RNA sequence: GGGAACGACUCGAGUAGAGUCGAAAACAUCUCUUCGGCUAGUGAGCGAUACGCGCUCCGUUGUGCUCAUUAUUAUUCGCGUUACGCACGACCGUGUAACAUCCCGGCACGAGUCGAAUCAGGUGGCUCUCGCUGGACGUUUCGACGUUCAGUGGGGAAAAGAAACAACAACAACAAC
Reactivity to 2A3 in 0.01 (KOAc 150mM, MgCl2 10mM, bicine 150mM(pH8.5), 24C), signal-to-noise 6, nucleotides 027 to 126: c010a050u000c020u000c000u010u060c000g000g000c000u040a110g060u080g300a030g000c000g110a140u110a180c090g020c000g010c070u000c010c010g010u030u040g020u010g000c010u010c100a050u020u140a070u100u050a090u070u100c050g010c030g070u050u070a040c070g000c020a020c020g040a020c000c030g000u010g000u020a060a040c020a110u070c020c010c000g030g000c000a000c000g020a020g010u000c000g000a010a030u060c020a010g030g010u020g030g010c020
Reactivity to DMS in 0.01 (KOAc 150mM, MgCl2 10mM, bicine 150mM(pH8.5), 24C), signal-to-noise 1, nucleotides 027 to 126: c040a000u000c030u000c300u000u000c000g000g000c000u000a260g000u100g000a090g000c020g000a300u100a060c100g010c100g010c070u000c000c030g010u000u020g010u000g000c020u010c060a070u020u020a050u020u030a050u010u000c040g020c080g010u000u000a100c100g000c030a080c030g000a020c040c040g030u000g010u000a050a050c070a110u010c020c030c030g000g010c000a010c000g010a050g010u000c020g020a040a050u010c210a060g010g020u000g000g000c070